This 207-nucleotide RNA was probed chemically with 2A3 and DMS. It was measured as part of the RMDB library OK3TST. High 2A3 reactivity points to a flexible backbone, as in loops and unpaired stretches. Reactivities are given for positions 27 through 156. The DMS profile rests on 3,338 reads.

RNA sequence: GGGAACGACUCGAGUAGAGUCGAAAAUCUGACCUGUUUCCCCACUCGUGACCUGGGGGCAAGUAUUUCAAUGCUGCCCAGUCCUCCUAUUGGCAGCUGUCCUAGCAGGGAGCCAUCUGCCCUGCCCUGGCAUUUGGGAGGUGGCUGAAGGACCAGAGUAAACAGGGUUUUUCGAAACCCUGUUUACAAAAGAAACAACAACAACAAC
Reactivity to 2A3 in 0.01 (KOAc 150mM, MgCl2 10mM, bicine 150mM(pH8.5), 24C), signal-to-noise 2, nucleotides 027 to 156: u030c080u080g060a000c020c040u050g070u010u080u020c040c000c010c010a030c030u050c030g130u140g080a170c010c040u030g000g000g010g010g010c020a070a020g040u080a190u030u280u130c120a130a050u110g000c010u070g080c000c000c010a010g040u090c000c000u010c010c010u050a030u130u100g040g000c020a040g010c070u040g000u070c020c010u060a090g020c020a020g020g000g010a000g040c020c020a070u050c100u150g160c000c000c010u030g030c020c020c040u030g050g050c050a050u110u070u110g000g010g000a010g030g000u000g000g000c000u080g020a070a060g020g000a010c040c010a010g060a020
Reactivity to DMS in 0.01 (KOAc 150mM, MgCl2 10mM, bicine 150mM(pH8.5), 24C), signal-to-noise 1, nucleotides 027 to 156: u000c060u000g000a110c050c010u100g000u000u010u000c080c020c000c080a090c050u000c080g010u010g000a090c090c070u000g010g010g000g060g000c060a050a080g010u010a110u000u010u000c110a090a180u000g030c000u000g040c000c020c020a100g000u000c030c030u000c040c060u000a110u000u000g030g020c010a050g040c050u000g020u000c050c010u010a100g000c040a070g010g010g000a120g000c020c030a060u010c030u010g000c000c000c050u000g120c030c030c040u020g000g010c040a090u000u030u000g000g040g020a120g030g010u000g000g020c000u000g000a050a080g020g000a190c000c040a100g010a300